[RMDB]
RNA sequence: GGGAACGACUCGAGUAGAGUCGAAAACAACUGUUAUCUUGCGACUGCAUUGUUAACACUCCAACAAAUAGAGUUGAAGUUUAAUCCACCUGCUCUACAAAGGGCUGGUGAAGCUGCUAACUUUUGUCCACACAUGGCUUCGGCCAUGUGAAAAGAAACAACAACAACAAC
Reactivity to 2A3 in 0.01 (KOAc 150mM, MgCl2 10mM, bicine 150mM(pH8.5), 24C), signal-to-noise 9, nucleotides 027 to 129: c010a000a010c030u020g010u050u010a090u060c070u060u190g030c030g060a090c040u050g000c050a030u040u080g020u030u060a060a020c030a000c080u000c010c010a010a010c020a030a210a110u300a060g140a010g050u020u020g030a050a000g010u010u050u150a040a020u070c030c000a000c010c010u020g020c000u010c000u060a150c120a070a240a110g020g000g000c010u030g010g000u000g000a010a000g000c020u020g000c010u020a020a020c000u010u000u030u050g050u000c010c000a020
Reactivity to DMS in 0.01 (KOAc 150mM, MgCl2 10mM, bicine 150mM(pH8.5), 24C), signal-to-noise 4, nucleotides 027 to 129: c050a070a060c110u030g040u030u020a100u000c060u000u100g040c070g000a090c100u010g070c070a050u050u030g010u100u000a060a090c160a080c020u020c000c000a050a030c100a070a150a130u120a080g060a090g030u010u000g020a080a060g020u040u000u090a050a120u040c050c020a030c010c010u000g000c030u020c010u050a130c300a080a130a040g070g010g000c040u020g040g000u000g010a050a080g040c050u000g030c070u000a050a030c070u000u000u000u000g020u060c000c000a140

This 170-nucleotide RNA was probed chemically with 2A3 and DMS. The 2A3 profile rests on 26,310 reads. For 2A3 the reverse transcriptase was SuperScript II with manganese. Conditions: 150 mM KOAc, 10 mM MgCl2 and 150 mM bicine (pH 8.5), 24 C. It was measured as part of the RMDB library 15KLIB.